Structure probing data (DMS and 2A3) for a 177-nucleotide construct. For 2A3 the reverse transcriptase was SuperScript II with manganese. Conditions: 150 mM KOAc, 10 mM MgCl2 and 150 mM bicine (pH 8.5), 24 C. Values are in units of 0.01, from 0 to 300, in steps of 10. The data come from the RNA Mapping Database (RMDB), library TTRDES.
RNA sequence: GGGAACGACUCGAGUAGAGUCGAAAAAAAAGAUAUGGAGUUCCGGGAGUCUGGUGGUACGAUGAAAGACGUCGGAAACGACGUCUGGAGUACCAGAAGGACGAAGAACGGAACUCCUAAGUCAAAACAUUACAAUUUCGUUCGCGAAAUUGUAAUGAAAAGAAACAACAACAACAAC
Reactivity to DMS in 0.01 (KOAc 150mM, MgCl2 10mM, bicine 150mM(pH8.5), 24C), signal-to-noise 2, nucleotides 027 to 126: a060a040a060a120g000a100u000a300u000g010g010a030g020u010u000c000c000g020g000g020a180g020u000c000u000g040g010u000g010g000u000a000c000g000a120u000g000a130a050a010g010a000c000g000u010c010g000g010a160a130a200c010g020a030c000g000u000c000u000g010g010a070g000u010a000c000c000a040g010a300a300g000g000a000c000g000a040a130g020a170a190c000g000g000a010a020c010u000c000c000u010a000a110g010u000c040a090a080a140a130
Reactivity to 2A3 in 0.01 (KOAc 150mM, MgCl2 10mM, bicine 150mM(pH8.5), 24C), signal-to-noise 1, nucleotides 027 to 126: a000a020a000a250g000a020u060a100u100g000g000a000g000u000u000c010c030g020g100g010a020g010u040c050u170g160g060u140g000g000u050a010c010g190a300u130g100a040a020a000g000a010c010g000u010c000g060g020a100a140a010c020g010a000c000g000u040c020u000g000g010a000g000u010a000c000c000a020g060a050a000g040g000a000c040g000a110a050g000a010a000c010g000g000a000a000c000u000c010c000u000a060a010g020u000c070a040a000a120a150